[RMDB]
RNA sequence: GGGAACGACUCGAGUAGAGUCGAAAAGAUCGGUGAUCACGUCGGCGGCAUGUCCGCCAAUGGCUGCUGGAGCACAUUCGUCAGAUGCGAUGCCCGGCUGGCGGUGACGCUCCCGCCCGAGCUGCCGGAGGAGGGCAUGAUUCGUCAUGCCCUCCUCAAAAGAAACAACAACAACAAC
Reactivity to 2A3 in 0.01 (KOAc 150mM, MgCl2 10mM, bicine 150mM(pH8.5), 24C), signal-to-noise 3, nucleotides 027 to 126: g030a040u060c040g010g090u120g050a090u100c050a010c100g110u070c070g040g020c020g000g000c160a230u190g090u060c010c020g000c030c000a010a000u050g000g000c050u050g030c010u020g020g030a020g010c000a020c000a040u290u210c070g050u030c000a020g020a040u150g180c010g070a070u140g090c000c020c050g040g020c010u000g010g020c010g020g000u020g030a040c100g000c000u000c000c000c000g000c000c010c000g020a010g000c040u060g020c040c030g060
Reactivity to DMS in 0.01 (KOAc 150mM, MgCl2 10mM, bicine 150mM(pH8.5), 24C), signal-to-noise 2, nucleotides 027 to 126: g010a030u000c020g010g010u000g010a120u000c130a120c080g020u000c070g020g000c010g000g010c000a210u010g020u010c040c000g000c020c020a010a030u020g000g020c110u010g030c040u000g000g020a030g010c020a170c030a040u000u000c020g000u000c020a060g010a080u020g000c080g010a090u000g040c070c090c040g000g000c000u000g030g010c000g030g010u000g000a080c140g010c060u000c010c000c050g000c010c000c040g010a070g020c030u000g030c000c020g010
An RNA of 177 nucleotides, treated with 2A3 and DMS and read out base by base. Reactivities are rounded to 0.1 and cut off at 0 and 3.